[RMDB]
RNA sequence: GGGAACGACUCGAGUAGAGUCGAAAAGAUAUGGAGACCUGUACGAGCGACUCGGAAACGAGAAUCGCGAUGAGUACAUGGUCUCCUAAGUCAAAGCCCCUCUCAACGUUCGCGUUGAGAGGGGCAAGAUGAAUAACAUGUUCGCAUGUUAUUCAUCAAAAGAAACAACAACAACAAC
Reactivity to DMS in 0.01 (KOAc 150mM, MgCl2 10mM, bicine 150mM(pH8.5), 24C), signal-to-noise 5, nucleotides 027 to 126: g000a040u000a300u010g000g010a010g000a000c010c000u000g000u000a010c010g010a170g010c000g010a040c000u000c000g010g000a080a080a180c000g010a010g010a090a110u000c010g010c000g000a100u010g010a250g010u000a010c000a010u010g030g000u000c000u000c000c000u000a000a060g000u000c040a080a110a170g000c000c000c000c000u000c000u000c000a010a000c000g010u000u010c210g000c010g010u000u000g000a000g010a000g000g000g000g010c000a000a010
Reactivity to 2A3 in 0.01 (KOAc 150mM, MgCl2 10mM, bicine 150mM(pH8.5), 24C), signal-to-noise 5, nucleotides 027 to 126: g010a020u070a040u150g010g000a000g000a000c000c000u000g010u010a020c030g040a020g080c000g010a010c000u010c010g010g040a090a060a020c010g000a010g050a150a300u070c000g030c030g060a200u170g120a030g010u000a000c010a010u030g000g000u000c000u010c000c000u000a000a000g000u000c020a010a050a050g000c000c000c000c010u000c000u000c000a000a010c010g060u100u070c290g020c000g130u000u000g000a000g010a000g000g000g000g000c000a000a000
An RNA of 177 nucleotides, treated with DMS and 2A3 and read out base by base. It was measured as part of the RMDB library TTRDEL. The reactions ran in a buffer of 150 mM KOAc, 10 mM MgCl2 and 150 mM bicine (pH 8.5), at 24 C.